[RMDB]
RNA sequence: GGGAACGACUCGAGUAGAGUCGAAAAUGAAACAACCGCUUAGAAAUAAGCGCGUAUGUGUGUGUGGUAUAGAUCCGUAUCCGAAAGAUGGAACUGGUGUACCGUUCGAGUCACCAAAUUUUACAAACGAUCAUUCAGUAUUCGUACUGAAUGAUCGAAAAGAAACAACAACAACAAC
Reactivity to DMS in 0.01 (KOAc 150mM, MgCl2 10mM, bicine 150mM(pH8.5), 24C), signal-to-noise 5, nucleotides 027 to 126: u010g000a150a170a060c020a040a050c030c000g000c000u000u000a000g000a150a110a180u010a010a010g000c000g030c260g010u000a050u000g020u000g010u000g010u000g010u000g010g010u000a060u010a050g010a050u010c020c030g020u000a070u000c020c020g000a090a100a140g000a120u010g000g000a050a060c120u010g010g000u000g000u010a030c010c000g000u000u020c130g010a070g000u010c010a040c010c020a040a040a110u000u010u010u000a120c190a040a090a220
Reactivity to 2A3 in 0.01 (KOAc 150mM, MgCl2 10mM, bicine 150mM(pH8.5), 24C), signal-to-noise 3, nucleotides 027 to 126: u110g020a030a020a020c020a000a010c020c010g000c020u030u020a010g020a030a100a050u040a070a020g000c030g000c060g020u030a270u110g040u000g010u000g020u020g040u080g010g010u030a060u010a080g160a100u000c030c000g000u040a120u010c020c020g150a260a110a060g130a080u230g010g010a050a020c040u070g020g050u020g020u040a030c010c000g000u030u090c030g000a010g000u000c010a010c020c000a030a120a080u230u220u060u090a070c080a000a110a020